[RMDB]
RNA sequence: GGGAACGACUCGAGUAGAGUCGAAAAUAUGUCAUUUGUUGUGCGUACAGCAAUUAUCACAACUUUCUCUAUGGAGGCACAUAGAGAAAUUGUUGUGCGUACAGCAGGUGGCACAACUUUCUCUAUGUACCUGCAUAGAGGAAGUGUGGAAGUGAAACGUGACCACUCUGUUCGCAGAGUGGUUACGAAAAGAAACAACAACAACAAC
Reactivity to 2A3 in 0.01 (KOAc 150mM, MgCl2 10mM, bicine 150mM(pH8.5), 24C), signal-to-noise 5, nucleotides 027 to 156: u300a100u130g160u110c130a160u050u040u040g020u030u000g020u040g090c100g060u080a070c080a070g060c040a070a100u110u080a170u220c030a010c050a140a300c040u000u010u000c000u000c000u000a020u000g140g070a040g010g000c020a000c000a020u000a000g000a010g030a010a000a010u070u140g010u000u000g010u000g000c000g070u130a030c010a020g050c030a000g080g030u060g040g000c000a000c000a010a000c000u000u000u000c000u000c000u000a000u000g010u010a030c010c010u020g070c000a000u000a000g000a000g000g010a000a000g000u000g000u010g020g040a060a050g050u060g070a050a030a020
Reactivity to DMS in 0.01 (KOAc 150mM, MgCl2 10mM, bicine 150mM(pH8.5), 24C), signal-to-noise 2, nucleotides 027 to 156: u010a040u000g030u010c070a050u050u010u000g000u010u000g010u000g010c080g030u020a110c040a110g020c040a030a050u000u000a120u010c070a110c050a080a070c040u000u000u000c000u000c010u000a020u010g000g010a110g000g030c050a050c010a010u000a020g000a020g020a010a000a020u000u000g010u010u010g020u000g000c000g050u010a100c050a170g000c100a090g010g020u000g010g000c010a020c010a030a020c010u000u000u000c000u000c000u030a010u000g020u000a040c110c100u000g000c010a000u000a000g010a010g010g010a000a010g030u010g030u000g000g010a120a170g000u000g020a100a120a170